[RMDB]
RNA sequence: GGGAACGACUCGAGUAGAGUCGAAAAGAUAUGGAUGGGAGCAACAGCAUCCGGUUCGGAAACGAACCGAUGACAUGCUCAGUCCUAAGUCAAAACUAGCGCUACUUGUUCGCAAGUAGCGCUAGAACAACACCACUUACUUCGGUAAGUGGUGUUGAAAAGAAACAACAACAACAAC
Reactivity to DMS in 0.01 (KOAc 150mM, MgCl2 10mM, bicine 150mM(pH8.5), 24C), signal-to-noise 3, nucleotides 027 to 126: g010a020u000a240u000g010g010a020u000g000g030g000a020g000c010a020a080c290a180g010c010a010u000c110c100g020g020u000u000c000g010g020a060a080a140c010g000a010a000c000c000g010a000u000g000a040c130a150u000g020c000u000c000a300g000u000c000c000u000a020a150g000u020c040a130a050a060a170c010u000a010g020c000g000c000u000a000c000u000u030g000u010u020c190g030c010a000a010g010u000a000g000c000g000c000u000a000g000a040a150
Reactivity to 2A3 in 0.01 (KOAc 150mM, MgCl2 10mM, bicine 150mM(pH8.5), 24C), signal-to-noise 2, nucleotides 027 to 126: g010a010u060a010u130g020g000a030u070g270g300g000a020g000c010a010a230c060a160g120c000a030u090c200c140g020g010u000u000c010g020g000a030a040a030c010g000a000a000c000c000g020a000u000g050a100c010a100u040g000c000u010c010a020g000u020c010c000u000a100a030g050u050c040a020a010a150a200c010u000a000g030c020g000c010u010a000c000u020u000g070u200u090c300g040c150a000a000g000u000a000g000c000g000c000u000a000g000a000a010

An RNA of 177 nucleotides, treated with DMS and 2A3 and read out base by base. The 2A3 profile rests on 3,575 reads.